[RMDB]
RNA sequence: GGGAACGACUCGAGUAGAGUCGAAAAAGUUUGGCGACCAUGGUGGAUCAGAACCGUUUCGGGUGAAGCCAUGGUCUGAAGGGGAUGACGUCCCUUCUGGCUCAUCCACAAAAACCGUCUCGGGUGGGUCUUGCUUGCUUUUCGAAGCAAGCAAGACAAAAGAAACAACAACAACAAC
Reactivity to DMS in 0.01 (KOAc 150mM, MgCl2 10mM, bicine 150mM(pH8.5), 24C), signal-to-noise 2, nucleotides 027 to 126: a070g000u010u000u020g030g010c180g000a010c010c000a020u000g000g030u000g000g010a110u000c020a230g030a100a160c080c090g050u000u000u000c030g040g010g000u020g000a300a140g010c000c000a000u000g000g000u000c020u000g000a000a040g000g000g000g000a000u000g000a060c100g000u020c000c000c060u060u000c020u000g000g020c000u000c020a030u000c000c010a070c110a020a100a040a080a120c170c090g000u010c040u030c070g010g030g000u000g000g000
Reactivity to 2A3 in 0.01 (KOAc 150mM, MgCl2 10mM, bicine 150mM(pH8.5), 24C), signal-to-noise 3, nucleotides 027 to 126: a000g140u100u120u180g060g050c010g000a000c000c000a000u000g000g020u010g020g000a030u030c040a090g100a230a130c070c120g150u140u200u280c240g040g020g020u000g010a010a000g000c000c000a000u000g000g000u010c000u000g000a000a000g070g030g000g000a020u090g120a000c020g060u000c000c000c000u020u000c030u020g000g000c000u000c030a030u050c050c010a030c060a010a080a010a070a090c080c030g070u030c060u040c070g040g000g010u050g040g020